[RMDB]
RNA sequence: GGGAACGACUCGAGUAGAGUCGAAAAGAUAUGGAGAAUCUGAAUCAGCGAGGAUCACACUUCGGAAACGAAGUGUGGGAGCUGAACUCAGAGUUCUCCUAAGUCAAAACGGUCACUUCGGUGACCGGACUAUCUCAAUCUUCGGAUUGAGAUAGUCAAAAGAAACAACAACAACAAC
Reactivity to DMS in 0.01 (KOAc 150mM, MgCl2 10mM, bicine 150mM(pH8.5), 24C), signal-to-noise 5, nucleotides 027 to 126: g010a040u000a300u010g010g000a020g010a050a080u000c000u000g010a030a130u000c010a000g010c000g010a110g020g010a040u010c000a000c000a000c000u000u010c010g010g000a120a090a240c000g000a010a010g010u000g030u000g000g000g000a040g020c000u000g000a030a070c140u000c010a010g000a040g010u000u000c010u000c000c000u000a010a080g010u010c030a110a090a090a300c010g010g000u000c000a000c010u000u010c210g040g000u000g010a010c000c000g000
Reactivity to 2A3 in 0.01 (KOAc 150mM, MgCl2 10mM, bicine 150mM(pH8.5), 24C), signal-to-noise 4, nucleotides 027 to 126: g010a030u090a060u150g010g000a010g010a020a030u000c020u020g000a010a040u010c000a000g010c010g070a300g090g040a010u020c000a000c000a000c000u010u000c010g030g000a060a090a060c010g000a000a000g000u000g000u010g000g000g010a000g000c000u010g010a020a090c020u000c010a010g050a030g080u030u010c000u000c000c000u030a150a010g070u030c050a020a020a120a130c030g000g000u000c000a010c010u050u120c300g190g010u000g000a000c010c000g000
Description:
Conditions: 150 mM KOAc, 10 mM MgCl2 and 150 mM bicine (pH 8.5), 24 C. An RNA of 177 nucleotides, treated with DMS and 2A3 and read out base by base. For DMS, 6,816 sequencing reads were counted. Reactivities are rounded to 0.1 and cut off at 0 and 3.